RNA sequence: GGGAACGACUCGAGUAGAGUCGAAAAACCUCCUGGAAGAAAUUGGAGGCAUGGUCCCUACUCUCCGGAUGCCUUGGAUCUUGUUGGAGAGGCAGGACUCGUAAGCUAUAAGUGCCCAACACAACUCAAAGUCCAGACAAUAGCAGAGUGUCAGGGACCUGCGCAGUAAUUUCGAUUACUGCGCAGGAAAAGAAACAACAACAACAAC
Reactivity to 2A3 in 0.01 (KOAc 150mM, MgCl2 10mM, bicine 150mM(pH8.5), 24C), signal-to-noise 2, nucleotides 027 to 156: a040c000c030u010c000c020u060g060g020a110a000g100a070a300a090u160u120g020g000a040g000g010c000a040u140g040g010u040c000c010c000u020a020c000u000c000u000c010c010g050g090a060u040g090c020c060u080u140g000g050a090u080c030u080u080g090u070u100g010g010a080g000a050g130g000c030a010g000g030a020c030u050c090g060u150a090a000g040c010u090a080u010a300a030g040u060g010c000c000c040a040a030c080a010c010a050a090c040u180c180a000a180a000g040u020c010c020a030g050a090c020a090a070u050a150g000c020a000g020a000g010u040g050u080c100a020g010g010g010a010